Chemical mapping of a 177-nucleotide RNA with DMS and 2A3. Values cover nucleotides 27 to 126. DMS adducts were read by reverse transcription with MarathonRT. It was measured as part of the RMDB library OK2TRN.

[RMDB]
RNA sequence: GGGAACGACUCGAGUAGAGUCGAAAAGAUCUGAUCAUCAAGCCGACGACCCAGGCCGCAGGCAGCAACCUGCCGGCAGUGCCCAACGUGGCCGCCGACGCCGGCGUAGCGGCAGCACCGGCUGUCCCAACAAUGCCAGGUUCGCCUGGCAUUGUUGAAAAGAAACAACAACAACAAC
Reactivity to DMS in 0.01 (KOAc 150mM, MgCl2 10mM, bicine 150mM(pH8.5), 24C), signal-to-noise 2, nucleotides 027 to 126: g040a030u000c000u010g010a160u000c110a070u010c070a080a090g010c030c030g000a070c040g000a130c150c030c060a130g000g000c000c000g000c010a030g010g030c080a160g010c190a120a170c090c020u000g020c010c030g000g000c020a140g000u010g010c000c010c020a110a070c250g000u000g000g000c040c040g010c100c040g010a070c130g020c060c010g020g030c020g020u000a030g010c040g000g030c000a090g010c060a070c080c010g020g000c000u010g000u000c020c030
Reactivity to 2A3 in 0.01 (KOAc 150mM, MgCl2 10mM, bicine 150mM(pH8.5), 24C), signal-to-noise 1, nucleotides 027 to 126: g060a070u110c150u290g070a080u120c020a000u000c050a020a050g000c020c040g040a120c010g100a120c000c000c090a040g110g010c000c000g000c050a020g070g000c050a070g000c020a060a140c000c020u050g070c020c000g020g000c010a020g010u100g140c000c000c000a290a230c110g080u300g020g030c030c010g050c040c020g050a080c200g000c000c020g000g000c040g020u030a020g000c010g010g020c020a020g040c010a040c080c000g050g000c020u020g050u060c000c020